This 177-nucleotide RNA was probed chemically with 2A3. Source: RMDB library RFM100, as collected in RNAgym.

RNA sequence: GGGAACGACUCGAGUAGAGUCGAAAAGCGAGUAGUGAGGGGAUUUUUGUUGGUGUGGCUAUAUGUCACCUAUUAAUUAUUUGUUGCGUUUAUUAAGCCAAUGAGUAAAAAACGCAAUGGCACAGCACACUCCGAGAUGCUUCGGCAUCUCGGAGUGAAAAGAAACAACAACAACAAC
Reactivity to 2A3 in 0.01 (KOAc 150mM, MgCl2 10mM, bicine 150mM(pH8.5), 24C), signal-to-noise 1, nucleotides 027 to 126: g160c090g000a050g000u110a000g000u040g100a040g120g010g240g000a090u120u070u000u000u070g000u080u010g000g070u050g000u000g020g010c160u120a140u010a060u300g120u050c000a010c000c020u020a070u190u090a040a280u190u240a100u300u030u160g080u000u050g000c030g000u000u000u050a130u060u000a260a000g000c020c040a130a020u160g040a050g210u150a000a250a000a000a000a000c000g000c000a000a000u010g000g010c100a020c000a070g000c010a030
The RNA was probed in 150 mM KOAc, 10 mM MgCl2 and 150 mM bicine (pH 8.5) at 24 C.